[RMDB]
RNA sequence: GGGAACGACUCGAGUAGAGUCGAAAACGCGCAUGUGUAAAAAUCGUACGCUACGCAUGAAAAAUGCGUUAGUAUUGCAGAGGAAAGAAAGAAAGAAAGAAAUCUCUGCUAUAACGAUCGCGAAAAAGGGAUUAUCUUACUUCGGUAAGAUAAUCCCAAAAGAAACAACAACAACAAC
Reactivity to DMS in 0.01 (KOAc 150mM, MgCl2 10mM, bicine 150mM(pH8.5), 24C), signal-to-noise 1, nucleotides 027 to 126: c000g000c000g080c180a000u120g040u000g000u040a030a080a180a200a140u000c040g000u040a070c080g000c020u000a000c000g010c000a000u020g000a000a170a120a040a050u000g030c020g000u010u000a020g010u000a020u020u000g000c000a040g000a040g000g000a050a070a150g100a260a070a190g000a110a070a020g000a180a090a040g010a100a120a060u000c000u000c000u000g020c000u010a000u080a070a050c000g000a070u000c050g000c050g000a060a020a130a160a020
Reactivity to 2A3 in 0.01 (KOAc 150mM, MgCl2 10mM, bicine 150mM(pH8.5), 24C), signal-to-noise 2, nucleotides 027 to 126: c020g110c000g030c010a150u060g040u120g090u230a000a220a000a000a000u110c010g020u050a040c050g000c050u030a000c000g000c000a020u050g150a040a140a000a080a000u060g000c000g000u000u090a000g000u000a080u000u110g010c000a040g000a000g020g000a070a100a180g020a000a040a050g190a010a140a000g220a040a040a000g140a000a130a010u000c000u000c000u000g000c000u010a030u010a020a000c000g000a000u010c030g000c040g130a030a150a010a000a070